[RMDB]
RNA sequence: GGGAACGACUCGAGUAGAGUCGAAAAACUGCCAUACGUGGCAGAAACACGCCUUACCAGGACUAAACAGCGUGUCUAAAAAACAGUCCUUCAUACAUGAUCUGGAGGGUAGAUCAGGAAUACUAAAAAAAUCGGGUGAAGUUCGCUUCACCCGAAAGAUCCACUCUAGCUUCGGCUAGAGUGGAUCAAAAGAAACAACAACAACAAC
Reactivity to 2A3 in 0.01 (KOAc 150mM, MgCl2 10mM, bicine 150mM(pH8.5), 24C), signal-to-noise 1, nucleotides 027 to 156: a000c020u010g010c000c000a020u050a160c230g030u070g000g000c000a000g030a010a050a000c000a010c000g010c010c080u070u060a010c020c060a020g010g000a020c000u130a050a060a000c000a000g010c000g000u010g080u080c130u120a030a040a040a040a000a000c030a000g000u000c040c030u000u080c070a160u090a160c030a090u010g000a020u000c000u050g080g020a090g120g130g050u230a020g040a010u020c030a000g030g050a030a100u160a150c070u230a120a000a000a000a020a000a040u040c020g000g000g000u000g000a000a000g010u050u100c110g090c110u000u000c000a000c000c000c000g000a000a000a000